Background
An RNA of 177 nucleotides, treated with DMS and 2A3 and read out base by base. Conditions: 150 mM KOAc, 10 mM MgCl2 and 150 mM bicine (pH 8.5), 24 C. The 2A3 profile rests on 2,035 reads. The data come from the RNA Mapping Database (RMDB), library M2PK50.
[RMDB]
RNA sequence: GGGAACGACUCGAGUAGAGUCGAAAAACACGGAACUUCGGUUCCGUGUAUAGGGACGAAAUAAGACGAUAGCGCUUGUCGCCCGAGCAAAAAGGCGGAAAAACUGCAUCCUCUUCGGAGGAUGCAACAGGAAGACGGUAUUCGUACCGUCUUCCUGAAAAGAAACAACAACAACAAC
Reactivity to DMS in 0.01 (KOAc 150mM, MgCl2 10mM, bicine 150mM(pH8.5), 24C), signal-to-noise 2, nucleotides 027 to 126: a030c010a020c000g000g000a020a010c000u000u000c110g080g010u000u000c000c000g010u000g000u010a010u000a090g000g010g000a080c040g000a040a050a050u010a040a050g020a040c020g030a130u000a100g010c100g030c020u000u000g000u000c000g020c010c010c020g000a120g000c110a020a030a080a080a020g000g010c040g030g000a070a060a060a070a100c170u010g010c000a000u000c000c000u010c020u000u010c220g040g020a050g000g000a000u000g020c000a020a020
Reactivity to 2A3 in 0.01 (KOAc 150mM, MgCl2 10mM, bicine 150mM(pH8.5), 24C), signal-to-noise 2, nucleotides 027 to 126: a000c000a010c010g000g020a000a000c020u060u090c180g100g000u000u000c000c010g000u010g000u010a000u010a010g010g020g040a050c030g150a000a100a100u130a050a040g020a000c040g180a140u130a090g100c130g020c080u030u000g070u020c010g000c000c000c000g030a020g030c060a050a040a010a040a020g120g010c070g060g080a030a090a030a020a060c050u040g000c000a020u000c000c010u020c010u030u060c180g070g000a020g010g000a000u000g000c000a000a000